[RMDB]
RNA sequence: GGGAACGACUCGAGUAGAGUCGAAAAAGGGAAUUCGGCAAGUUAGUCCCGUAAGUUCGCGAUAAGGGAUGCCUGCCUCGCAAUGAGGCAGGUCGCAGUGACUCGGAGGCUCCGACUGUCUAAUAACAGGAAUUUAAACUUUCGAGUUUAAAUUCCUAAAAGAAACAACAACAACAAC
Reactivity to DMS in 0.01 (KOAc 150mM, MgCl2 10mM, bicine 150mM(pH8.5), 24C), signal-to-noise 5, nucleotides 027 to 126: a120g010g000g010a100a070u020u000c030g010g010c060a080a070g000u010u010a120g020u010c010c000c010g020u010a090a100g000u020u020c140g010c010g030a120u010a090a170g000g000g000a060u020g000c000c000u000g010c010c000u000c000g000c240a130a110u020g000a020g000g010c000a000g010g020u000c070g000c080a100g010u010g000a070c060u000c020g000g000a100g000g000c060u010c050c020g000a080c070u000g000u000c040u000a080a070u020a090a130c210
Reactivity to 2A3 in 0.01 (KOAc 150mM, MgCl2 10mM, bicine 150mM(pH8.5), 24C), signal-to-noise 4, nucleotides 027 to 126: a000g100g010g020a020a050u090u050c020g010g000c030a010a120g040u080u090a010g030u020c010c010c000g000u010a030a030g030u050u120c100g000c010g070a020u060a150a050g080g020g010a030u100g000c010c000u000g000c000c000u000c010g080c110a130a180u300g000a000g010g000c010a000g000g000u000c000g000c000a000g030u030g080a010c010u000c020g020g010a040g030g010c020u030c040c010g010a020c010u030g040u020c030u080a080a070u050a240a030c040